Structure probing data (DMS and 2A3) for a 207-nucleotide construct.
For DMS, 8,042 sequencing reads were counted.
As a SHAPE reagent, 2A3 marks flexible, mostly unpaired nucleotides at the ribose 2'-OH.
Conditions: 150 mM KOAc, 10 mM MgCl2 and 150 mM bicine (pH 8.5), 24 C.
For DMS the reverse transcriptase was MarathonRT.
Reactivities are given for positions 27 through 156.
RNA sequence: GGGAACGACUCGAGUAGAGUCGAAAAGUAGUUCUUCAUGGCGUCCCCACCUCCUCUGUGAGGGCGGGUGAGUCGACCGCCGACUGCGACUCCCAGGAUGCCUCGCGCCCGCCUUUCCGCGGGAGGCCAGACGGCUGAGGGUGCCGGCAGCGGCUGGCAUGUUGGCAUAAUUCGUUAUGCCAACAUGAAAAGAAACAACAACAACAAC
Reactivity to DMS in 0.01 (KOAc 150mM, MgCl2 10mM, bicine 150mM(pH8.5), 24C), signal-to-noise 1, nucleotides 027 to 156: g030u010a060g010u000u010c020u010u000c100a200u010g020g020c050g010u010c030c000c000c010a040c000c010u000c010c010u000c140u010g020u000g010a030g000g000g000c060g000g000g020u000g020a210g010u000c060g020a080c000c010g030c000c030g010a080c010u010g010c000g000a080c010u000c000c010c000a090g000g020a170u000g010c010c010u000c080g040c030g020c010c010c000g000c000c070u000u010u010c110c080g000c000g010g000g020a000g000g020c010c030a050g010a030c030g010g020c010u000g000a040g020g010g020u000g020c040c010g010g010c020a050g000c020g010g000c010u010g000g010
Reactivity to 2A3 in 0.01 (KOAc 150mM, MgCl2 10mM, bicine 150mM(pH8.5), 24C), signal-to-noise 4, nucleotides 027 to 156: g070u120a000g010u020u030c010u040u040c070a140u180g000g000c040g210u090c010c030c000c000a020c000c000u030c000c030u300c190u290g160u230g070a030g010g020g010c200g040g000g020u280g030a030g010u030c010g050a080c010c000g000c020c050g140a280c010u000g010c000g040a040c020u010c000c020c000a010g130g020a070u040g000c000c000u010c020g000c010g000c000c000c000g030c030c040u090u270u140c050c050g000c000g030g000g010a000g100g000c010c010a060g010a050c100g010g010c020u020g010a050g020g010g010u050g110c070c040g180g010c010a000g000c000g030g010c060u100g020g020